[RMDB]
RNA sequence: GGGAACGACUCGAGUAGAGUCGAAAAAGGCACGAGUACGGCGGCUUGUCCCAGGUGGGAAGCCCGAACGCGCGGGAGAGAUCCCGUAUCCGUUCCUUGGUGAGACCGGCCUCCCGCAGCGGGCUCCACGAGUCUAAAUGUUCGCAUUUAGACUCGUAAAAGAAACAACAACAACAAC
Reactivity to DMS in 0.01 (KOAc 150mM, MgCl2 10mM, bicine 150mM(pH8.5), 24C), signal-to-noise 3, nucleotides 027 to 126: a010g000g000c000a070c020g010a140g010u000a010c020g000g000c030g000g010c010u000u010g000u000c010c000c000a180g020g040u000g020g000g000a090a080g000c010c010c020g010a070a090c130g010c170g000c000g000g000g000a020g000a120g010a090u000c180c000c000g000u000a020u000c030c030g000u000u000c030c030u000u010g030g020u010g000a110g000a070c070c030g000g000c080c000u000c000c000c000g020c020a080g000c010g000g000g010c000u000c010c010
Reactivity to 2A3 in 0.01 (KOAc 150mM, MgCl2 10mM, bicine 150mM(pH8.5), 24C), signal-to-noise 2, nucleotides 027 to 126: a000g070g010c070a060c060g030a010g020u070a030c020g020g000c000g010g010c020u030u050g040u020c000c010c010a020g110g130u130g030g050g010a070a040g000c000c000c000g050a150a050c040g030c010g010c010g130g020g010a010g010a010g010a090u160c000c010c000g000u020a040u020c010c000g070u060u070c000c030u140u210g150g000u230g050a130g000a040c070c000g030g000c010c000u020c000c000c000g000c000a010g000c000g000g000g000c010u040c000c010